[RMDB]
The record gives the reactivity of an RNA of 207 nucleotides to 2A3 and DMS. The DMS profile rests on 8,002 reads. Reactivities are given for positions 27 through 156. The data come from the RNA Mapping Database (RMDB), library OK3TST. The reactions ran in a buffer of 150 mM KOAc, 10 mM MgCl2 and 150 mM bicine (pH 8.5), at 24 C.

RNA sequence: GGGAACGACUCGAGUAGAGUCGAAAAUAUUCUUACCAAUGCGCGUAAUGGUAUUGUGCCCUUGGGCGUUAUACCACGUACGGCAGCAAACAAGUUACUCCUAGUGGUGCCAGACUACUCGGUGUUUUCGUCAACAGUAGUGUUGCCGACGCUGACAAAUUGAAUUACGAUUCGUCGUAAUUCAAUUAAAAGAAACAACAACAACAAC
Reactivity to 2A3 in 0.01 (KOAc 150mM, MgCl2 10mM, bicine 150mM(pH8.5), 24C), signal-to-noise 4, nucleotides 027 to 156: u150a040u070u070c010u080u050a060c040c040a120a160u150g020c130g000c010g020u040a040a050u030g010g000u000a000u020u070g020u040g010c020c030c000u160u300g130g000g010c000g000u010u020a010u010a000c000c000a030c100g010u020a050c000g100g000c000a010g000c020a010a020a120c010a020a120g050u080u060a070c040u030c010c000u030a010g020u010g070g020u030g180c130c040a100g050a110c020u030a010c010u030c040g020g000u010g010u040u070u070u100c060g070u030c040a030a020c020a070g090u170a030g100u100g000u030u000g010c020c000g020a030c020g000c040u050g040a050c070a020
Reactivity to DMS in 0.01 (KOAc 150mM, MgCl2 10mM, bicine 150mM(pH8.5), 24C), signal-to-noise 3, nucleotides 027 to 156: u000a070u000u000c080u010u000a180c020c000a150a240u000g010c000g010c030g040u000a120a030u000g010g010u000a030u000u000g010u010g000c000c040c030u000u000g040g030g000c000g020u000u000a030u000a010c000c000a030c030g030u010a060c020g010g020c050a070g020c040a030a060a110c090a090a120g020u000u000a120c000u000c020c020u010a100g020u000g010g010u000g010c050c090a190g010a160c030u000a000c010u000c040g010g020u000g030u000u010u010u000c060g010u000c000a030a050c030a090g020u000a160g010u000g040u000u000g010c020c040g000a080c030g020c000u000g030a100c050a110
For 2A3 the reverse transcriptase was SuperScript II with manganese.